[RMDB]
An RNA of 207 nucleotides, treated with 2A3 and DMS and read out base by base.
It was measured as part of the RMDB library M2RFPK.
The RNA was probed in 150 mM KOAc, 10 mM MgCl2 and 150 mM bicine (pH 8.5) at 24 C.
2A3 adducts were read by reverse transcription with SuperScript II with manganese.
The 2A3 profile rests on 2,304 reads.
RNA sequence: GGGAACGACUCGAGUAGAGUCGAAAAGUUAUGCUCUCGCUGCCUAAUGGCGGUGCGGGAAACCCACUCUAAAGUCCUAAGGGUUAGCCCCUUAAGGCGGGGUUCGGAGGCACCUGGCAACAGAAGCUGAAACUGUGCACAUUCGUGUGCACAGUAAACUUAUUGGACAGUUCGCUGUCCAAUAAGUAAAAGAAACAACAACAACAAC
Reactivity to 2A3 in 0.01 (KOAc 150mM, MgCl2 10mM, bicine 150mM(pH8.5), 24C), signal-to-noise 4, nucleotides 027 to 156: g050u110u140a090u270g050c000u010c000u000c000g010c010u000g000c010c030u290a300a230u240g000g000c010g010g060u030g010c040g000g000g040a090a060a030c000c020c020a070c020u160c080u130a120a100a260g300u030c010c000u000a000a000g030g000g030u060u110a120g050c000c000c010c010u010u020a100a060g000g000c010g020g000g000g000u050u110c080g110g010a010g010g030c000a000c000c000u050g300g000c000a010a010c000a020g010a010a000g000c010u010g010a060a000a000c000u000g000u000g010c000a000c000a010u040u080c180g110u080g000u000g010c000a000c000a000g000u000a000a000
Reactivity to DMS in 0.01 (KOAc 150mM, MgCl2 10mM, bicine 150mM(pH8.5), 24C), signal-to-noise 1, nucleotides 027 to 156: g010u010u010a060u010g020c000u000c010u010c030g000c040u000g010c010c020u000a100a180u010g000g040c030g070g020u000g020c010g000g030g010a140a030a060c010c000c030a150c170u000c140u000a110a130a150g010u000c010c000u000a000a020g000g030g000u000u010a200g010c150c000c010c010u000u000a020a010g050g050c040g000g000g010g020u000u000c030g040g000a300g000g000c020a050c000c000u010g020g000c060a090a120c030a030g020a140a090g000c010u000g040a160a060a030c000u000g030u000g000c000a000c000a100u000u020c300g060u020g040u000g000c020a000c010a000g020u000a000a050